[RMDB]
RNA sequence: GGGAACGACUCGAGUAGAGUCGAAAAUCUUUGUUCUAGUGACCCAGUGUGUACAUAAGGUUGCUUCCUUUCAACCUAAUUCAUCAUAGAUUAGCUUUUGGAAAGAUUGGGUUUUCAAAUGCGUAAAACUGCGUACAACAUUCGUGUUGUACGCAGUAAAAGAAACAACAACAACAAC
Reactivity to DMS in 0.01 (KOAc 150mM, MgCl2 10mM, bicine 150mM(pH8.5), 24C), signal-to-noise 2, nucleotides 027 to 126: u010c000u000u010u010g010u000u000c060u000a080g020u010g000a120c040c010c010a120g010u010g020u000g010u000a080c150a080u000a130a050g000g000u010u000g000c170u020u000c040c040u010u000u010c040a040a050c180c010u000a040a080u010u000c060a070u000c140a080u000a090g000a060u000u010a130g000c040u000u010u010u000g020g010a040a040a050g000a210u000u000g000g000g010u010u000u010u000c040a020a020a020u000g000c030g010u000a030a050a050
Reactivity to 2A3 in 0.01 (KOAc 150mM, MgCl2 10mM, bicine 150mM(pH8.5), 24C), signal-to-noise 2, nucleotides 027 to 126: u000c020u110u040u130g040u050u020c060u070a060g060u050g120a060c020c010c020a060g000u080g060u070g030u050a040c010a070u170a060a000g040g010u000u030g000c000u140u070c080c000u100u170u030c010a020a010c010c010u060a060a080u110u100c060a070u000c030a050u070a160g080a130u070u080a030g000c020u060u010u090u000g020g000a040a000a000g040a030u150u170g050g110g050u040u000u040u000c040a020a010a000u090g040c020g040u080a000a020a050